[RMDB]
RNA sequence: GGGAACGACUCGAGUAGAGUCGAAAAAGCUUCAAUCUCCGUGAAGAGCGUCAGCGGACGGCCUCUGAGACGAGCGAUGGACAGUAGAGCUCGUCUCUACCAGUCGCGUGCUGACUCUCACGCCCACCAACAAUCAUUACUUCGGUAAUGAUUGUUGAAAAGAAACAACAACAACAAC
Reactivity to 2A3 in 0.01 (KOAc 150mM, MgCl2 10mM, bicine 150mM(pH8.5), 24C), signal-to-noise 6, nucleotides 027 to 126: a000g050c080u140u090c040a060a160u050c070u020c070c020g000u020g030a150a090g010a060g050c060g080u030c000a000g000c020g060g100a190c000g000g000c020c030u080c100u030g000a010g000a000c010g000a000g000c010g060a100u130g110g130a100c090a150g210u220a050g050a010g030c000u000c000g000u000c000u010c000u000a010c010c030a010g020u020c010g010c020g090u100g000c000u000g000a000c000u000c000u000c010a020c000g030c000c000c010a050c030
Reactivity to DMS in 0.01 (KOAc 150mM, MgCl2 10mM, bicine 150mM(pH8.5), 24C), signal-to-noise 7, nucleotides 027 to 126: a060g010c110u000u000c140a090a100u010c050u010c170c040g020u000g010a100a060g010a030g020c170g010u000c010a050g020c010g010g010a090c030g010g000c020c070u000c200u000g010a020g000a010c010g010a030g010c010g010a280u000g020g010a070c180a070g000u010a020g010a300g000c000u000c070g000u000c000u000c000u000a020c160c170a110g000u000c000g010c040g000u000g010c040u000g000a030c110u000c000u000c000a040c060g010c010c020c020a090c190

The data come from the RNA Mapping Database (RMDB), library VIROID. Structure probing data (2A3 and DMS) for a 177-nucleotide construct. For 2A3, 10,698 sequencing reads were counted. For 2A3 the reverse transcriptase was SuperScript II with manganese. The RNA was probed in 150 mM KOAc, 10 mM MgCl2 and 150 mM bicine (pH 8.5) at 24 C. For DMS, 6,403 sequencing reads were counted.